[RMDB]
RNA sequence: GGGAACGACUCGAGUAGAGUCGAAAAGGAGGAUUCCGCUCCUUUGCGCUUUUUUUUCGGAUUAGGCGUGGAGGCGAAAGUCACCCUCCUCGCAUCGCAAGUUCGUGCUUGCGGCUUACACGUAGGGAAAAACCCAUUGACUUCGGUCAAUGGGUAACAUAGUGAGAGACUUCGGUCUCUCACUAUGAAAAGAAACAACAACAACAAC
Reactivity to 2A3 in 0.01 (KOAc 150mM, MgCl2 10mM, bicine 150mM(pH8.5), 24C), signal-to-noise 3, nucleotides 027 to 156: g000g010a010g010g000a070u110u070c040c020g010c130u060c010c020u030u030u040g000c000g000c000u040u020u020u020u010u010u060u050c210g110g020a060u060u020a030g010g040c010g000u020g000g010a000g020g000c060g100a260a060a010g050u100c030a070c030c010c000u000c000c000u010c010g040c010a020u090c000g000c000a000a030g010u170u300c130g130u300g090c000u000u000g000c000g010g000c010u040u060a040c130a030c100g110u130a110g020g060g040a000a110a020a080a070c000c000c000a010u000u000g010a000c000u020u070c220g070g000u000c000a010a010u010g000g000g000u000a000a000
Reactivity to DMS in 0.01 (KOAc 150mM, MgCl2 10mM, bicine 150mM(pH8.5), 24C), signal-to-noise 2, nucleotides 027 to 156: g000g010a040g010g010a270u000u000c030c020g000c060u000c000c010u000u000u010g010c010g010c000u000u000u020u000u000u000u000u060c240g040g020a030u000u000a030g010g010c010g050u000g000g020a030g000g010c090g000a040a050a080g010u020c050a120c080c000c000u000c010c000u000c060g040c080a080u000c030g030c000a020a020g010u000u000c190g000u000g020c020u000u000g000c000g020g020c100u010u000a100c100a030c080g010u000a110g010g000g000a030a030a050a070a080c000c010c010a010u010u000g020a020c000u010u000c300g050g010u000c000a000a010u010g000g010g000u000a000a050
An RNA of 207 nucleotides, treated with 2A3 and DMS and read out base by base. For DMS the reverse transcriptase was MarathonRT. 2A3 adducts were read by reverse transcription with SuperScript II with manganese. It was measured as part of the RMDB library M2RFPK.